[RMDB]
RNA sequence: GGGAACGACUCGAGUAGAGUCGAAAAAUGCUGGAUGUGGCGUGGGCCCCGAUGCUGGGCGCUUUCUCGGUGCUCUUUGAGGAGUUCACAGAAGGGACGACGGUGAACUUGUGCCUGGCGGGGCUGGUGAUAAUCAAUAUUUCGAUAUUGAUUAUCAAAAAGAAACAACAACAACAAC
Reactivity to DMS in 0.01 (KOAc 150mM, MgCl2 10mM, bicine 150mM(pH8.5), 24C), signal-to-noise 9, nucleotides 027 to 126: a060u010g010c020u000g010g010a100u010g010u000g010g010c040g020u000g010g010g000c010c000c000c010g010a140u010g020c020u000g010g010g020c010g020c020u000u010u000c010u000c030g010g010u000g010c080u000c040u000u010u010g010a150g000g000a080g000u010u010c030a030c030a170g010a090a090g010g000g010a060c070g010a140c070g000g010u000g000a020a030c180u010u000g020u000g010c010c010u000g010g040c010g010g010g010g020c030u000g000g010
Reactivity to 2A3 in 0.01 (KOAc 150mM, MgCl2 10mM, bicine 150mM(pH8.5), 24C), signal-to-noise 5, nucleotides 027 to 126: a020u090g010c010u030g070g100a240u130g100u180g100g020c040g010u030g040g030g000c010c000c000c050g090a100u170g000c010u000g000g010g030c010g010c000u070u150u040c020u010c030g060g030u080g030c040u010c000u080u070u080g050a070g050g030a060g030u120u090c050a050c010a070g120a110a060g060g020g050a050c070g020a020c040g100g010u080g020a020a030c010u040u070g000u000g020c000c000u010g000g010c000g000g010g010g000c000u000g010g030
Record summary:
Chemical mapping of a 177-nucleotide RNA with DMS and 2A3. The RNA was probed in 150 mM KOAc, 10 mM MgCl2 and 150 mM bicine (pH 8.5) at 24 C.